The record gives the reactivity of an RNA of 177 nucleotides to 2A3 and DMS.
RNA sequence: GGGAACGACUCGAGUAGAGUCGAAAAAGCGCGAAACUCACCACAAGAUGAGAAUUCCCUUGAAGGUCGUUGUAGACUACAACGUUGAUAGGAUGCAGAUGUACAGGUAGUAAUACCAAAGUCGAGCAUUCCAAUCGGUGUUCGCACCGAUUGGAAUAAAAGAAACAACAACAACAAC
Reactivity to 2A3 in 0.01 (KOAc 150mM, MgCl2 10mM, bicine 150mM(pH8.5), 24C), signal-to-noise 2, nucleotides 027 to 126: a000g120c070g000c000g000a160a000a000c000u000c010a020c010c000a090c080a120a030g000a080u040g030a030g010a030a090u180u110c000c000c000u000u090g230a110a090g170g020u090c000g020u020u050g040u130a070g050a220c040u030a030c040a030a030c010g010u050u070g040a100u090a150g000g000a010u000g030c000a010g040a140u030g000u060a020c090a010g010g020u030a050g030u030a050a120u030a110c000c010a000a000a000g070u050c040g000a000g030c010
Reactivity to DMS in 0.01 (KOAc 150mM, MgCl2 10mM, bicine 150mM(pH8.5), 24C), signal-to-noise 4, nucleotides 027 to 126: a060g000c070g010c040g000a070a060a110c040u000c050a020c040c020a140c300a050a090g010a140u000g000a050g010a110a130u000u000c020c000c000u010u030g000a210a090g000g000u010c030g000u020u020g000u010a130g000a080c110u000a070c080a010a070c070g010u010u000g000a060u020a070g010g000a030u000g000c020a160g010a020u000g000u020a050c200a130g000g000u000a030g020u030a050a110u010a020c010c010a080a100a170g000u010c030g000a120g000c110